[RMDB]
RNA sequence: GGGAACGACUCGAGUAGAGUCGAAAAGAACAUCGAUGUUCGGGCGCUCUUUCAAAGCCCAGAAUGCUUCAGUGAUUAAUAUCGUCGCCUGCUCCUGUGUCAUUCCUGGUCGACAUAUCCAGGCAUAUCAUAAAAUCAGUUUCGACUGAUUUUAUGAAAAAGAAACAACAACAACAAC
Reactivity to 2A3 in 0.01 (KOAc 150mM, MgCl2 10mM, bicine 150mM(pH8.5), 24C), signal-to-noise 6, nucleotides 027 to 126: g010a020a010c010a020u090c050g090a060u070g020u050u030c010g010g020g000c050g020c020u100c010u050u260u090c140a150a080a010g000c010c000c020a010g050a040a020u070g020c040u050u040c030a050g030u030g090a160u050u120a110a080u070a040u150c030g040u010c020g040c010c000u010g010c000u020c000c030u110g000u010g010u070c010a040u050u050c000c000u000g010g020u040c040g020a060c050a130u120a070u070c020c010a020g030g000c020a060u110a030
Reactivity to DMS in 0.01 (KOAc 150mM, MgCl2 10mM, bicine 150mM(pH8.5), 24C), signal-to-noise 8, nucleotides 027 to 126: g000a060a080c030a040u000c090g010a090u010g010u000u000c030g020g000g020c070g010c090u000c060u000u000u010c150a100a130a160g010c010c010c010a070g010a060a050u000g000c080u000u000c040a060g020u000g000a110u000u000a070a080u000a100u000c040g020u000c040g010c060c010u010g010c020u000c030c070u000g010u010g010u000c030a090u010u000c010c010u010g010g000u000c060g010a060c110a050u000a070u000c040c040a050g000g010c210a060u000a090
An RNA of 177 nucleotides, treated with 2A3 and DMS and read out base by base. Conditions: 150 mM KOAc, 10 mM MgCl2 and 150 mM bicine (pH 8.5), 24 C. It was measured as part of the RMDB library OK2TST. DMS adducts were read by reverse transcription with MarathonRT.